[RMDB]
RNA sequence: GGGAACGACUCGAGUAGAGUCGAAAAACACCCCUAUGUUUGUGACAUAGCAGCAGGUUGCCAUGGAGAUGAUGGCUUUAUCAGCCACACUACCUUGCCAUGACCUCACAACAAGGUUACCAAGAAGGCGCUUAUUAUAAUUCGUUAUAAUAAGCGCAAAAGAAACAACAACAACAAC
Reactivity to DMS in 0.01 (KOAc 150mM, MgCl2 10mM, bicine 150mM(pH8.5), 24C), signal-to-noise 8, nucleotides 027 to 126: a090c180a140c050c010c020c030u000a020u000g000u020u000u010g010u000g000a090c020a020u000a030g010c140a100g010c120a070g000g000u010u000g020c140c020a040u020g000g000a080g020a070u000g010a130u000g000g000c010u000u010u030a070u020c300a080g000c010c000a020c050a070c050u000a090c040c010u010u000g010c090c090a070u010g000a060c060c070u000c040a090c090a070a060c160a050a040g010g000u000u010a100c090c050a050a100g000a120a130g010
Reactivity to 2A3 in 0.01 (KOAc 150mM, MgCl2 10mM, bicine 150mM(pH8.5), 24C), signal-to-noise 6, nucleotides 027 to 126: a000c050a130c010c010c000c000u040a030u070g050u030u100u090g120u060g040a020c010a020u070a030g010c040a010g050c050a040g050g090u070u070g030c030c030a040u130g050g020a040g010a070u080g030a110u020g000g000c000u010u040u020a170u100c070a010g000c010c000a010c000a030c010u140a190c010c000u010u040g010c020c010a070u100g040a040c010c010u010c010a040c000a060a090c010a030a050g050g010u040u060a040c090c030a040a060g020a060a040g140